[RMDB]
RNA sequence: GGGAACGACUCGAGUAGAGUCGAAAAUACGGGUCGAGUUAGCUUGGCUUCCAGUGGCGCUGGCGAAGGGGUGACCACGCCAACUUCACCCGGAAGGUCCGACCCAGUGCGGAUGUUCCACACAUCGACUCAAUCGACGGUUCGCCGUCGAUUGAGUAAAAGAAACAACAACAACAAC
Reactivity to DMS in 0.01 (KOAc 150mM, MgCl2 10mM, bicine 150mM(pH8.5), 24C), signal-to-noise 1, nucleotides 027 to 126: u070a050c000g010g000g030u000c010g010a110g000u030u030a090g030c260u030u060g010g000c000u000u030c000c040a300g000u000g000g010c130g000c080u000g000g000c010g040a080a300g000g040g000g060u080g000a130c000c050a300c030g030c100c000a000a030c000u000u000c020a000c000c060c180g000g000a000a030g000g000u000c050c050g000a000c000c090c000a180g060u000g000c180g020g000a100u020g000u000u020c070c020a130c000a080c030a000u000c120g000
Reactivity to 2A3 in 0.01 (KOAc 150mM, MgCl2 10mM, bicine 150mM(pH8.5), 24C), signal-to-noise 2, nucleotides 027 to 126: u090a000c020g000g000g000u000c020g000a010g230u160u110a040g040c060u120u280g050g010c000u070u000c010c000a040g000u080g090g000c070g000c020u010g040g000c010g080a170a140g050g070g010g090u270g080a030c010c010a000c000g010c000c010a000a000c000u010u010c000a020c000c100c050g000g000a030a000g020g070u000c000c000g000a010c020c030c030a050g000u120g090c060g030g030a060u030g050u210u020c080c000a030c000a000c000a140u080c030g060